[RMDB]
RNA sequence: GGGAACGACUCGAGUAGAGUCGAAAAAUGGCUUAGGGGAAAGUCCCCGGACACUGGGUAGAGAGUACCUGGGGUGUAACCCCCCACACCUGAUCUAAACCACCUGGGGUUAUACACCUUGGACCAAGUUAGAGGAUAGAUUCGUCUAUCCUCUAACAAAAGAAACAACAACAACAAC
Reactivity to DMS in 0.01 (KOAc 150mM, MgCl2 10mM, bicine 150mM(pH8.5), 24C), signal-to-noise 8, nucleotides 027 to 126: a110u010g000g010c050u000u010a070g010g010g000g010a130a160a220g010u010c010c000c000c010g000g000a070c070a090c120u010g010g010g000u010a040g000a100g000a120g010u010a050c090c110u010g000g000g010g010u000g000u020a040a090c060c060c010c000c080c050a070c120a080c070c020u010g010a100u020c050u010a050a080a130c050c030a060c090c050u000g000g010g000g000u010u010a060u000a050c060a090c010c000u000u000g000g010a090c030c050a080a110
Reactivity to 2A3 in 0.01 (KOAc 150mM, MgCl2 10mM, bicine 150mM(pH8.5), 24C), signal-to-noise 8, nucleotides 027 to 126: a000u060g020g000c020u060u070a080g010g010g000g050a040a120a100g120u130c000c000c000c010g000g010a030c040a020c060u080g020g030g000u090a040g050a020g010a020g120u030a110c010c010u020g000g000g000g000u020g010u040a040a040c000c000c000c000c030c000a050c010a020c020c010u060g030a100u050c020u110a050a070a140c020c010a030c020c030u050g010g000g000g000u010u020a020u010a020c110a120c010c000u010u040g020g010a040c010c020a060a010